[RMDB]
RNA sequence: GGGAACGACUCGAGUAGAGUCGAAAACCUCUAAAUGCAUCAGCUGAUCUCCUAUACUUCCCAGCAUAAAACAAUAUCCUUUCUGUGCACCUAGAGGCAAAGGGUAUUUGAUCUACACCAAAAAGGAAAUGCAAUAGUGCUUCGGCACUAUUGCAUUAAAAGAAACAACAACAACAAC
Reactivity to DMS in 0.01 (KOAc 150mM, MgCl2 10mM, bicine 150mM(pH8.5), 24C), signal-to-noise 2, nucleotides 027 to 126: c020c010u010c100u000a050a080a050u000g020c020a080u000c090a090g030c000u020g010a030u000c010u020c010c030u010a080u010a070c210u000u000c010c030c010a130g030c230a080u000a080a000a060a170c080a040a060u000a070u000c010c000u000u000u000c080u010g020u010g000c070a070c050c060u010a040g010a140g020g030c120a050a000a020g000g000g000u010a040u000u000u020g020a070u020c120u000a090c040a120c070c040a000a030a040a060a030g000g050a080
Reactivity to 2A3 in 0.01 (KOAc 150mM, MgCl2 10mM, bicine 150mM(pH8.5), 24C), signal-to-noise 1, nucleotides 027 to 126: c000c000u030c010u100a040a050a010u080g000c010a010u010c030a060g000c010u020g060a110u020c060u050c010c020u070a010u030a130c040u060u050c000c020c000a010g060c040a040u190a080a120a000a040c050a050a050u040a040u000c020c010u000u080u020c070u150g190u150g000c020a080c040c010u060a070g040a160g140g010c020a000a040a000g020g000g000u000a020u020u020u020g040a010u000c040u080a040c000a030c040c060a040a000a130a040a000g140g050a100